Structure probing data (2A3) for a 207-nucleotide construct. The 2A3 profile rests on 802 reads. The reactions ran in a buffer of 150 mM KOAc, 10 mM MgCl2 and 150 mM bicine (pH 8.5), at 24 C.

RNA sequence: GGGAACGACUCGAGUAGAGUCGAAAAGCACUUUUCGAAGUGCCCGGUAGCGUACUACAUUAUGGAGAGGAGUACUACCCACCUUAAUCCCAAAUAGGAUUAAGAGGUACUACCUCGAUGAAAUAAUGUAUCGCCAAAUGAAGUUUUCGAACUUCAAGAUAGGUCUCGGAUUCGUCCGAGACCUAUCAAAAGAAACAACAACAACAAC
Reactivity to 2A3 in 0.01 (KOAc 150mM, MgCl2 10mM, bicine 150mM(pH8.5), 24C), signal-to-noise 1, nucleotides 027 to 156: g030c010a000c000u010u020u210u140c270g130a080a030g000u010g030c000c000c010g100g050u120a040g000c050g000u020a050c000u010a000c030a030u000u010a010u000g010g000a020g000a010g020g000a000g000u010a010c020u070a080c020c060c000a100c000c020u000u000a000a000u000c020c010c010a180a250a100u300a070g010g000a000u000u000a000a000g000a000g030g020u000a020c000u150a300c000c000u000c000g050a040u020g010a000a030a000u000a010a010u000g000u010a010u300c000g020c030c000a020a020a050u130g000a000a000g000u000u000u030u180c300g100a090a020c000u000u010c000a020a020